[RMDB]
RNA sequence: GGGAACGACUCGAGUAGAGUCGAAAAUAUGCUCGAGAGUAGUGCGGAGCCAACUUUGCACCUCCUAUACUCUGGUGUAACCGCCAUGUUAGCUAUGUGGGCUAGGCCGCCCUCGUAGGGCACCGCCGCUACGGUACAAUUUCGAUUGUACCGUAGCAAAAGAAACAACAACAACAAC
Reactivity to 2A3 in 0.01 (KOAc 150mM, MgCl2 10mM, bicine 150mM(pH8.5), 24C), signal-to-noise 4, nucleotides 027 to 126: u120a050u090g010c010u010c050g090a060g000a010g080u300a020g000u060g100c040g020g030a020g030c030c040a110a090c070u080u090u100g000c040a100c010c000u070c010c010u080a080u040a120c050u080c070u070g030g000u030g030u050a100a090c040c020g000c020c030a060u130g060u120u160a040g020c060u040a040u100g060u060g040g040g000c030u030a070g090g090c030c030g000c000c020c000u020c020g030u090a050g020g000g000c020a010c020c020g040c020c020
Reactivity to DMS in 0.01 (KOAc 150mM, MgCl2 10mM, bicine 150mM(pH8.5), 24C), signal-to-noise 5, nucleotides 027 to 126: u000a110u010g030c010u000c040g000a110g020a140g010u000a100g020u010g020c040g020g000a070g010c080c100a060a110c110u010u010u000g010c060a070c070c050u000c080c070u000a120u010a080c100u000c060u010g000g020u000g000u000a030a110c210c080g010c040c070a060u000g010u000u010a080g000c070u000a050u000g010u000g000g000g010c030u000a080g010g020c100c120g010c020c000c030u000c080g000u000a190g000g000g020c020a090c060c070g020c140c150